[RMDB]
RNA sequence: GGGAACGACUCGAGUAGAGUCGAAAAAAUUGGAGCGUAAUCGCGUCUUGACGUGAGUGAGCCUAGACUGUAGGCUAUCCCAAGUGGGAUAGCAUAGCUCACAAUACGCUGAUCUACUGUCAUACAAUAUUCCGUGAGGUUUCGACCUCACGGAAUAAAAAGAAACAACAACAACAAC
Reactivity to DMS in 0.01 (KOAc 150mM, MgCl2 10mM, bicine 150mM(pH8.5), 24C), signal-to-noise 2, nucleotides 027 to 126: a060a100u010u000g020g000a040g040c000g020u010a020a300u010c010g030c020g000u000c070u000u010g040a040c010g040u000g010a010g000u000g000a010g030c000c050u000a040g000a040c020u000g010u010a030g010g000c000u000a000u000c000c000c000a280a150g010u000g020g000g000a010u000a000g010c000a060u000a070g010c000u000c020a030c000a080a180u000a010c000g010c000u000g010a040u010c020u000a020c010u000g000u000c000a140u000a100c200a110a080
Reactivity to 2A3 in 0.01 (KOAc 150mM, MgCl2 10mM, bicine 150mM(pH8.5), 24C), signal-to-noise 2, nucleotides 027 to 126: a000a020u170u140g040g000a020g000c000g000u020a030a050u020c000g000c000g020u030c040u060u210g120a010c010g020u020g000a040g000u020g000a000g000c000c010u000a050g000a050c040u030g000u030a000g000g000c000u000a000u030c000c000c020a190a110g260u300g040g000g000a000u010a000g010c000a020u040a020g000c000u010c000a000c000a000a010u050a010c000g000c010u040g050a060u070c010u000a020c000u030g030u020c010a050u080a160c060a120a180